An RNA of 177 nucleotides, treated with 2A3 and DMS and read out base by base. Reactivities are given for positions 27 through 126. DMS adducts were read by reverse transcription with MarathonRT. For 2A3 the reverse transcriptase was SuperScript II with manganese. The DMS profile rests on 3,933 reads. The data come from the RNA Mapping Database (RMDB), library OK1LIB.
[RMDB]
RNA sequence: GGGAACGACUCGAGUAGAGUCGAAAAGAAAAUAUAGCUGAUGCAGGGCUAUAAGCGAAAAUAGCGGAGACUAUAAGAAAGAUACCUGCAGAGGUAUCAAAGAAGAUAGGCAGGCUAUCAAAGAAAGAUGAUUAAUUAUUUUCGAAUAAUUAAUCAUAAAAGAAACAACAACAACAAC
Reactivity to 2A3 in 0.01 (KOAc 150mM, MgCl2 10mM, bicine 150mM(pH8.5), 24C), signal-to-noise 3, nucleotides 027 to 126: g020a000a100a120a000u120a000u050a010g020c020u050g060a140u150g200c130a110g060g000g100c010u010a020u030a100a060g060c050g090a190a010a060a000u030a020g000c050g000g080a050g000a050c030u030a030u020a160a060g040a150a120a030g010a040u030a000c010c020u030g050c060a040g000a010g250g010u000a000u010c020a000a080a030g100a040a030g020a040u040a000g030g050c080a030g050g000c030u020a040u050c020a020a110a100g120a080a010a010g100
Reactivity to DMS in 0.01 (KOAc 150mM, MgCl2 10mM, bicine 150mM(pH8.5), 24C), signal-to-noise 3, nucleotides 027 to 126: g020a130a080a130a110u020a020u020a020g000c000u000g000a120u030g000c150a040g000g000g010c020u000a010u010a050a110g020c080g000a080a090a090a030u000a010g010c010g020g010a220g000a070c020u000a020u000a010a110g000a170a120a100g010a000u000a010c000c000u000g010c300a170g010a020g010g000u000a000u000c000a010a050a060g010a190a120g000a030u000a000g010g000c010a140g000g000c020u000a020u020c080a040a090a170g000a130a070a090g010